[RMDB]
Chemical mapping of a 177-nucleotide RNA with 2A3 and DMS. DMS adducts were read by reverse transcription with MarathonRT. The data come from the RNA Mapping Database (RMDB), library OK2TST. Values cover nucleotides 27 to 126.
RNA sequence: GGGAACGACUCGAGUAGAGUCGAAAACGGUCACAAGGGCCACGCCGAACACAACCAGCACGGACCGCACGAGCCGCAGGCCCGACAGCACCAGCACCGGUGCGUACGGCGAGGACUGCGAGCCGGAGCCUACGGGACUAUUCGUAGUCCCGUAGGCAAAAGAAACAACAACAACAAC
Reactivity to 2A3 in 0.01 (KOAc 150mM, MgCl2 10mM, bicine 150mM(pH8.5), 24C), signal-to-noise 1, nucleotides 027 to 126: c000g030g030u040c020a010c020a200a080g040g010g000c000c000a010c020g050c040c010g070a120a030c060a000c010a090a120c020c030a030g010c030a040c090g040g020a080c000c010g030c030a040c020g020a020g000c010c000g050c030a020g040g020c000c010c020g000a000c010a030g000c000a000c000c000a000g060c090a070c060c080g020g000u020g000c020g000u110a040c030g000g010c010g000a150g000g010a000c000u030g000c010g010a020g000c000c010g040g000a030
Reactivity to DMS in 0.01 (KOAc 150mM, MgCl2 10mM, bicine 150mM(pH8.5), 24C), signal-to-noise 2, nucleotides 027 to 126: c010g000g000u000c070a130c130a040a150g020g010g000c000c040a100c300g000c000c000g010a080a070c200a060c120a050a080c010c050a120g000c060a120c070g000g000a080c040c030g000c040a080c030g000a060g010c030c010g000c080a040g000g000c000c000c000g010a050c080a100g010c060a000c000c000a130g010c220a080c300c100g030g000u020g000c010g030u000a040c140g000g000c000g000a110g000g000a070c190u000g010c020g000a080g010c020c010g000g010a140